[RMDB]
RNA sequence: GGGAACGACUCGAGUAGAGUCGAAAACUCAUUGAGCUGGCCAUCGUGGUCGAAGACGGCCAGCAUCGCAUAGCCGUGGUCGAUGGCUAUCACGUCAACCAAGGAGGGGCGGCAGCCAAGCUGCUCGCUUUGCAUCGGUUUUCGAACCGAUGCAAAGAAAAGAAACAACAACAACAAC
Reactivity to DMS in 0.01 (KOAc 150mM, MgCl2 10mM, bicine 150mM(pH8.5), 24C), signal-to-noise 3, nucleotides 027 to 126: c020u000c060a170u020u000g000a080g020c020u000g010g010c010c010a050u000c020g030u010g040g050u000c110g010a070a160g000a020c080g010g010c010c000a010g000c010a010u000c030g040c240a070u010a060g000c010c010g020u000g020g010u010c100g020a040u000g010g000c110u010a070u010c190a120c060g000u000c040a040a100c070c010a080a060g020g010a130g000g000g000g020c010g000g010c010a010g010c050c250a120a120g010c020u000g000c010u010c040g020
Reactivity to 2A3 in 0.01 (KOAc 150mM, MgCl2 10mM, bicine 150mM(pH8.5), 24C), signal-to-noise 2, nucleotides 027 to 126: c010u020c020a100u040u260g050a010g020c010u010g000g010c010c000a010u020c010g090u130g130g140u130c110g020a100a020g070a040c010g000g000c000c000a000g020c000a020u000c000g000c020a080u080a070g030c010c000g060u010g060g120u090c090g120a030u070g030g040c040u020a060u070c060a050c000g100u020c030a040a070c060c040a040a030g090g020a060g000g040g000g000c000g020g030c000a020g060c010c120a080a060g010c000u010g000c000u010c070g000